Structure probing data (2A3) for a 207-nucleotide construct. Conditions: 150 mM KOAc, 10 mM MgCl2 and 150 mM bicine (pH 8.5), 24 C.
[RMDB]
RNA sequence: GGGAACGACUCGAGUAGAGUCGAAAAGUCAUGCCUUCGGGCAUGACAGGUACCGAGAGGUACCAAAUAGCGUACAGGAGACACAGACUGUACGCUAAAAAAGUGUGUGUUCAAUAAGGUCCAAUUGAACACACACUAAAAUGGACCAAGUGUGUCACGUACUGGCUCGAUUCGUCGAGCCAGUACGAAAAGAAACAACAACAACAAC
Reactivity to 2A3 in 0.01 (KOAc 150mM, MgCl2 10mM, bicine 150mM(pH8.5), 24C), signal-to-noise 1, nucleotides 027 to 156: g000u000c000a000u000g000c000c000u030u070c170g100g000g020c000a000u000g000a000c000a000g000g010u010a010c010c010g060a060g000a010g070g010u000a000c000c000a030a030a030u040a000g000c010g000u000a000c000a020g010g030a090g020a090c010a000c000a030g100a010c000u000g000u000a000c000g000c000u000a000a050a000a000a000a000g000u000g000u030g000u000g000u000u000c020a020a020u070a120a070g120g010u150c070c010a030a050u000u050g000a000a000c000a000c020a000c000a000c000u000a000a000a000a000u090g080g030a000c000c040a100a110g070u020g000u010g000u000c000a000